[RMDB]
RNA sequence: GGGAACGACUCGAGUAGAGUCGAAAACAGGAAGAGGGCAACUGAGAUUGCACCAGGCCACCCUGGCCUGAUUGGGCACCCAGGAAGAGGGUGACUGAGAUUGGACCAGGCCGCCCUGGCCUGAUUGUCCCACUUACAAGUUCGCUUGUAAGUGGGAAAAAGAAACAACAACAACAAC
Reactivity to DMS in 0.01 (KOAc 150mM, MgCl2 10mM, bicine 150mM(pH8.5), 24C), signal-to-noise 4, nucleotides 027 to 126: c070a050g000g020a100a070g000a140g020g010g000c000a040a040c040u000g010a150g010a220u000u000g000c030a080c070c010a050g000g000c010c030a120c300c010c020u000g010g020c000c010u000g010a030u000u010g000g000g000c010a030c020c010c000a080g000g030a090a090g010a140g000g000g000u000g000a030c010u000g000a090g010a060u000u000g010g000a020c020c000a000g010g010c120c110g000c180c020c030u000g000g000c000c010u000g000a100u000u020g010
Reactivity to 2A3 in 0.01 (KOAc 150mM, MgCl2 10mM, bicine 150mM(pH8.5), 24C), signal-to-noise 1, nucleotides 027 to 126: c020a020g100g060a040a090g090a110g070g070g010c020a040a030c030u180g080a050g050a300u050u090g010c030a020c000c000a010g020g000c000c010a010c000c030c000u020g000g000c000c010u000g000a020u020u030g010g000g000c000a010c030c030c040a030g140g110a090a090g120a100g060g000g000u010g000a020c000u020g040a050g040a120u070u140g000g020a120c000c000a010g020g010c030c020g040c020c010c010u020g000g020c010c000u010g000a020u000u120g020
This 177-nucleotide RNA was probed chemically with DMS and 2A3. Reactivities are given for positions 27 through 126.